[RMDB]
This 177-nucleotide RNA was probed chemically with 2A3. The 2A3 profile rests on 892 reads. The RNA was probed in 150 mM KOAc, 10 mM MgCl2 and 150 mM bicine (pH 8.5) at 24 C.
RNA sequence: GGGAACGACUCGAGUAGAGUCGAAAAGAAUUGGUAUGUAAGCUACUACUUCCGGUAGCUGCGUCACACUUUAAGAGUGUGCAUACUGAGCCGAAGCUCAGCUUCGGUCCCCCAAGGGAAGCCCAAACAUGCUGGACUCGUUCGCGAGUCCAGCAUGAAAAGAAACAACAACAACAAC
Reactivity to 2A3 in 0.01 (KOAc 150mM, MgCl2 10mM, bicine 150mM(pH8.5), 24C), signal-to-noise 2, nucleotides 027 to 126: g130a030a150u100u050g020g010u000a000u000g000u000a000a000g000c030u010a000c000u000a000c000u000u000c000c020g000g020u000a000g000c000u000g030c000g000u000c000a000c000a000c010u110u150u270a300a140g230a000g230u000g000u000g000c000a000u000a000c000u000g010a000g000c000c000g000a000a000g000c000u050c300a050g000c000u010u000c000g000g000u000c000c000c000c000c000a050a080g140g000g000a020a000g060c020c000c000a040a070a030